[RMDB]
Structure probing data (DMS and 2A3) for a 177-nucleotide construct. For DMS, 2,956 sequencing reads were counted.

RNA sequence: GGGAACGACUCGAGUAGAGUCGAAAAAUGGCAAAGGUGGUGGAUAAAAACAAAGGGGAGUACUUUUUGUAUUCCGCUUCAUUGAAUGAUAAAGUUUUAUGGUCGAUAAUUUUUGACACAUUAUAAGACCUGCUAAAAUGUUCGCAUUUUAGCAGGUAAAAGAAACAACAACAACAAC
Reactivity to DMS in 0.01 (KOAc 150mM, MgCl2 10mM, bicine 150mM(pH8.5), 24C), signal-to-noise 2, nucleotides 027 to 126: a040u020g000g030c020a030a070a080g000g020u000g010g000u000g020g020a100u020a010a040a080a140a150c060a100a020a010g000g020g010g020a040g000u020a040c010u000u040u040u040u000g010u010a030u000u000c000c010g010c020u000u000c060a110u000u020g000a060a090u010g000a070u020a070a060a120g000u010u000u030u000a030u020g010g030u000c010g000a010u060a010a060u000u000u000u000u000g030a060c050a060c040a020u010u030a120u030a080a130g000
Reactivity to 2A3 in 0.01 (KOAc 150mM, MgCl2 10mM, bicine 150mM(pH8.5), 24C), signal-to-noise 4, nucleotides 027 to 126: a000u050g050g020c050a050a040a040g020g000u030g010g050u030g000g060a100u110a110a130a020a000a000c080a090a090a030g100g020g000g000a000g040u060a020c000u130u270u190u100u290g000u010a050u010u010c030c020g110c060u050u030c010a040u020u240g030a050a080u120g090a070u120a070a160a030g030u000u070u050u080a030u020g020g030u030c010g040a030u060a160a280u080u220u190u110u030g020a050c070a000c000a120u080u110a080u100a090a070g040
The reactions ran in a buffer of 150 mM KOAc, 10 mM MgCl2 and 150 mM bicine (pH 8.5), at 24 C.